This 177-nucleotide RNA was probed chemically with 2A3 and DMS.
Source: RMDB library TTRDEL, as collected in RNAgym.
For 2A3 the reverse transcriptase was SuperScript II with manganese.
Conditions: 150 mM KOAc, 10 mM MgCl2 and 150 mM bicine (pH 8.5), 24 C.
RNA sequence: GGGAACGACUCGAGUAGAGUCGAAAAGAUAUGGAUUGAGCGAUGACAUGCACUGUCGGAAACGACUGUGCAACAGCAUCCCCAAUCCUAAGUCAAAGCUUACAUAUGCUUCGGCAUAUGUAAGCAACAGCGUAUAGGACUUCGGUCCUAUACGCUGAAAAGAAACAACAACAACAAC
Reactivity to 2A3 in 0.01 (KOAc 150mM, MgCl2 10mM, bicine 150mM(pH8.5), 24C), signal-to-noise 2, nucleotides 027 to 126: g010a010u020a000u070g010g000a000u000u010g010a020g050c190g030a010u000g140a260c100a100u000g010c000a010c010u060g000u000c020g000g000a030a020a010c000g030a000c000u000g010u020g090c010a000a000c030a000g140c010a010u020c000c000c000c000a000a010u000c010c000u010a010a000g010u030c070a190a050a030g000c000u010u020a000c000a000u000a000u010g010c010u080u080c300g150g000c010a000u000a000u000g000u010a010a000g000c000a000a000
Reactivity to DMS in 0.01 (KOAc 150mM, MgCl2 10mM, bicine 150mM(pH8.5), 24C), signal-to-noise 2, nucleotides 027 to 126: g020a040u000a060u000g000g000a020u000u010g020a030g000c260g010a020u000g030a130c150a160u000g000c000a010c010u000g020u020c000g050g000a040a040a050c010g020a020c020u010g020u000g000c000a010a050c300a080g010c000a020u010c000c000c030c010a010a030u000c000c010u000a000a080g000u000c000a130a070a080g010c000u000u000a000c000a000u020a000u000g020c030u000u000c170g060g000c000a010u000a000u000g000u000a000a000g020c010a070a050